[RMDB]
Structure probing data (DMS and 2A3) for a 177-nucleotide construct.
Source: RMDB library VIROID, as collected in RNAgym.
The RNA was probed in 150 mM KOAc, 10 mM MgCl2 and 150 mM bicine (pH 8.5) at 24 C.
As a SHAPE reagent, 2A3 marks flexible, mostly unpaired nucleotides at the ribose 2'-OH.
In probing experiments dimethyl sulfate is read out at A N1 and C N3, which are open when not base-paired.

RNA sequence: GGGAACGACUCGAGUAGAGUCGAAAAUGGGCGCUGGCUGGAGCGCGCGGCUGUGAGUAAUCGCUCCUUUGGAAAAGAAAACCAGCGGCGAUACUCGCCUGAGCCUCGUUUUUUGUCCCGCUAGUCGGCUACUGAGAUAGUUCGCUAUCUCAGUAGCAAAAGAAACAACAACAACAAC
Reactivity to DMS in 0.01 (KOAc 150mM, MgCl2 10mM, bicine 150mM(pH8.5), 24C), signal-to-noise 2, nucleotides 027 to 126: u000g020g020g000c010g020c020u010g010g000c030u000g020g060a070g040c240g020c050g020c080g000g000c010u000g010u000g010a050g010u020a090a150u000c050g010c050u000c060c030u000u010u040g040g020a060a060a110a160g000a120a100a150a100c070c000a030g030c300g000g020c000g020a050u010a030c030u000c040g010c020c180u010g000a030g020c030c010u010c030g030u000u000u000u000u000u000g010u000c010c010c010g000c160u000a090g010u010c110g010
Reactivity to 2A3 in 0.01 (KOAc 150mM, MgCl2 10mM, bicine 150mM(pH8.5), 24C), signal-to-noise 1, nucleotides 027 to 126: u050g030g030g020c050g060c050u040g040g020c060u070g160g060a010g080c160g020c060g050c020g220g000c010u020g030u060g040a030g030u050a120a250u060c030g000c000u070c000c030u030u080u140g060g000a080a080a040a080g060a030a120a040a050c000c010a000g000c030g020g000c010g010a000u010a080c010u000c000g020c000c000u010g030a010g000c000c010u080c030g000u000u010u000u020u160u090g080u010c010c020c000g000c030u040a050g220u140c090g050